[RMDB]
RNA sequence: GGGAACGACUCGAGUAGAGUCGAAAAGGAAAGCACAUGAAGCACGCGAAGCACGGCAAGCACAUGAAGCACUACAAGCAGUACAAGCAGCGCAAGCAGUAGAAGCAGCCGAAGCAGUACAUAAAAACAUACCUUCUUUGUUCGCAAAGAAGGUAUGAAAAGAAACAACAACAACAAC
Reactivity to 2A3 in 0.01 (KOAc 150mM, MgCl2 10mM, bicine 150mM(pH8.5), 24C), signal-to-noise 3, nucleotides 027 to 126: g050g000a080a030a040g050c030a010c000a090u100g070a060a000g010c010a000c040g050c050g080a070a000g000c030a010c080g030g000c040a030a030g020c020a010c010a070u060g070a060a010g000c020a020c090u080a010c030a080a010g010c010a010g040u060a050c010a020a080g000c040a000g030c040g000c020a000a090g000c000a000g010u110a010g030a120a000g020c010a000g040c000c020g000a030a000g020c030a000g020u040a030c020a070u240a080a100a010a000a010
Reactivity to DMS in 0.01 (KOAc 150mM, MgCl2 10mM, bicine 150mM(pH8.5), 24C), signal-to-noise 4, nucleotides 027 to 126: g010g010a070a070a050g000c030a050c060a080u010g010a090a070g020c040a020c080g030c110g010a080a070g020c060a070c070g000g010c040a030a070g020c040a060c090a070u010g010a070a060g000c040a060c030u000a050c070a080a090g030c050a040g010u000a050c070a080a080g010c050a050g000c060g020c080a070a070g000c020a040g010u000a030g010a090a060g000c030a050g010c010c040g000a060a070g020c040a050g000u010a050c110a070u010a030a050a030a060a140